This 177-nucleotide RNA was probed chemically with 2A3 and DMS. High DMS reactivity at an A or C suggests that its Watson-Crick edge is free.

[RMDB]
RNA sequence: GGGAACGACUCGAGUAGAGUCGAAAAGAUAUGGACGUCCAAGUGCCAGCUAUGGGUCGGAAACGACCUUUAGCGGUAAUACUUGUGACGUCCUAAGUCAAAACGUUCACAGUUCGCUGUGAACGAACCUAAGCGUUACCUUCGGGUAACGCUUAGGAAAAGAAACAACAACAACAAC
Reactivity to 2A3 in 0.01 (KOAc 150mM, MgCl2 10mM, bicine 150mM(pH8.5), 24C), signal-to-noise 2, nucleotides 027 to 126: g010a040u060a060u140g010g020a000c000g010u000c000c010a020a030g030u040g200c140c140a110g000c070u000a020u040g000g000g000u000c030g010g000a080a060a020c020g030a040c040c000u000u000u000a000g000c000g000g000u160a190a120u140a120c000u000u040g040u280g060a000c000g000u040c010c000u000a020a010g000u010c000a070a070a030a050c020g000u000u030c000a010c010a000g030u080u100c300g050c130u020g010u030g050a010a000c000g020a000a010
Reactivity to DMS in 0.01 (KOAc 150mM, MgCl2 10mM, bicine 150mM(pH8.5), 24C), signal-to-noise 1, nucleotides 027 to 126: g030a010u000a300u020g000g000a010c010g020u000c000c000a000a030g020u000g020c150c070a140g020c000u000a010u010g000g020g010u000c000g000g000a050a100a150c000g040a000c000c000u000u000u000a000g010c000g000g050u000a110a090u000a130c000u000u020g000u070g000a000c020g050u010c000c000u040a000a080g000u010c010a170a130a130a170c040g020u000u010c000a000c000a000g030u000u010c190g050c000u010g020u000g010a000a000c010g000a050a060

DMS adducts were read by reverse transcription with MarathonRT. It was measured as part of the RMDB library TTRDES.